[RMDB]
RNA sequence: GGGAACGACUCGAGUAGAGUCGAAAACGGGGUGGCAUCAACCAUCCUAACGCCGUAGCGCUUCAUGCGCUGAGCCAGGCUAAUAAAAUUGGCCUGCAAGCUGAUGGGUUGGGCAAGAAGCUGGGUGUCAGCGUCACAUGUUCGCAUGUGACGCUGAAAAAGAAACAACAACAACAAC
Reactivity to DMS in 0.01 (KOAc 150mM, MgCl2 10mM, bicine 150mM(pH8.5), 24C), signal-to-noise 1, nucleotides 027 to 126: c130g000g010g040g010u000g000g000c060a140u000c280a130a080c020c030a010u000c000c010u000a140a160c160g000c040c050g000u010a060g000c030g010c030u000u020c280a100u010g010c040g000c030u000g000a080g000c150c110a020g000g000c030u000a030a060u000a070a040a110a300u010u000g000g000c020c000u000g000c130a060a080g000c000u000g000a060u000g030g020g000u000u010g020g000g040c080a010a110g010a100a080g010c110u000g000g000g010u000g000